RNA sequence: GGGAACGACUCGAGUAGAGUCGAAAAGAAUACAACUGUGAAUCGAAUGACUUGCGUUCGUAAUGGCAAGGGUUUCCUCAUUCUGUUCCAAAAGGAACCACUAUACAUUUCCACUGGUGGGACAGCCAUCGCGCUGAGUAUUCGUACUCAGCGCGAUAAAAGAAACAACAACAACAAC
Reactivity to DMS in 0.01 (KOAc 150mM, MgCl2 10mM, bicine 150mM(pH8.5), 24C), signal-to-noise 1, nucleotides 027 to 126: g000a070a080u000a070c130a070a060c190u030g090u000g000a100a090u000c300g000a010a000u000g020a000c030u040u000g000c000g000u040u020c230g010u050a030a070u000g040g000c030a090a020g010g000g000u000u000u040c000c010u000c090a180u010u000c000u000g010u000u000c050c000a010a060a240a150g040g000a070a180c060c080a000c080u000a080u070a070c190a160u000u000u000c040c030a000c240u000g000g000u000g000g010g010a070c050a000g020c120c210
Reactivity to 2A3 in 0.01 (KOAc 150mM, MgCl2 10mM, bicine 150mM(pH8.5), 24C), signal-to-noise 3, nucleotides 027 to 126: g120a010a050u290a050c090a100a100c140u120g050u090g180a040a000u100c020g010a060a020u010g050a100c020u040u030g020c000g130u180u120c030g060u180a130a170u190g120g000c030a070a030g070g000g000u000u000u050c010c040u040c010a020u020u000c000u020g040u000u000c000c000a010a000a140a140g060g020a040a000c000c000a000c020u110a110u050a080c110a100u000u000u060c010c070a070c040u030g000g020u000g020g030g050a010c040a000g030c020c000
Annotation
The record gives the reactivity of an RNA of 177 nucleotides to DMS and 2A3. The 2A3 profile rests on 1,186 reads. 2A3 adducts were read by reverse transcription with SuperScript II with manganese. The data come from the RNA Mapping Database (RMDB), library OK1LIB. The reactions ran in a buffer of 150 mM KOAc, 10 mM MgCl2 and 150 mM bicine (pH 8.5), at 24 C.